[RMDB]
RNA sequence: GGGAACGACUCGAGUAGAGUCGAAAAGAUAUGGAAAGCUGCGAGCAACAGCUCGGAAACGAGACAUGCUCAGCAGGCUUUCCUAAGUCAAAACUAGACUCAGCAUGUUCGCAUGCUGAGUCUAGAAUCUAGAUAACGAGUUCGCUCGUUAUCUAGAAAAAGAAACAACAACAACAAC
Reactivity to DMS in 0.01 (KOAc 150mM, MgCl2 10mM, bicine 150mM(pH8.5), 24C), signal-to-noise 5, nucleotides 027 to 126: g000a030u000a300u000g000g000a020a010a010g020c000u010g020c000g010a000g000c000a030a070c270a220g000c000u000c000g010g000a080a090a170c010g010a010g000a040c080a170u000g000c010u000c010a100g020c000a010g010g010c000u000u000u000c000c000u000a030a080g010u000c050a090a090a100a170c010u000a000g000a010c000u000c000a020g010c000a010u000g000u000u010c220g030c010a000u000g000c000u000g000a000g000u000c000u000a000g010a060a080
Reactivity to 2A3 in 0.01 (KOAc 150mM, MgCl2 10mM, bicine 150mM(pH8.5), 24C), signal-to-noise 3, nucleotides 027 to 126: g000a010u070a030u110g000g000a000a000a000g000c010u000g000c000g000a010g000c010a000a140c030a160g040c010u000c000g020g030a080a040a020c020g010a010g020a030c030a080u070g020c010u000c130a050g010c000a000g080g040c000u000u000u000c000c000u020a130a010g030u020c030a030a010a130a160c000u010a000g000a010c010u000c020a000g000c010a000u010g020u240u220c300g040c180a000u000g000c000u000g020a000g010u000c000u000a000g000a000a000
An RNA of 177 nucleotides, treated with DMS and 2A3 and read out base by base.